[RMDB]
RNA sequence: GGGAACGACUCGAGUAGAGUCGAAAAAGAUUUCGAAAAUACUAAAUCAGAUAUCGAUGUUAUAAAAUCUAUAUCCUCGAUCUUUGGAUAUUCUAACGAAAACUGUAACACGAUAGUGUUUGGCAUCCACUACAUACUCGUUCGCGAGUAUGUAGUGAAAAGAAACAACAACAACAAC
Reactivity to DMS in 0.01 (KOAc 150mM, MgCl2 10mM, bicine 150mM(pH8.5), 24C), signal-to-noise 4, nucleotides 027 to 126: a060g030a110u000u000u000c050g010a130a080a110a100u010a050c020u000a030a030a060u010c050a070g000a190u000a010u000c010g000a080u000g000u000u000a020u010a040a090a140a120u000c060u000a020u000a010u000c010c010u010c160g010a040u020c100u000u020u000g010g000a050u000a000u000u010c130u010a070a110c190g010a040a050a040a100c250u000g000u010a010a010c010a010c000g010a020u010a040g030u010g010u000u000u000g020g010c120a070u010c120
Reactivity to 2A3 in 0.01 (KOAc 150mM, MgCl2 10mM, bicine 150mM(pH8.5), 24C), signal-to-noise 4, nucleotides 027 to 126: a000g070a080u060u060u040c020g070a100a080a050a060u110a080c020u060a030a080a080u090c020a040g070a240u010a010u060c010g050a090u000g010u010u050a070u020a110a200a010a070u030c020u040a020u010a000u020c010c040u020c040g170a300u040c160u160u110u050g010g000a010u010a020u160u050c120u090a080a070c080g040a040a010a050a060c050u030g010u080a000a000c010a010c010g030a030u030a090g060u030g010u020u070u020g040g010c030a030u020c030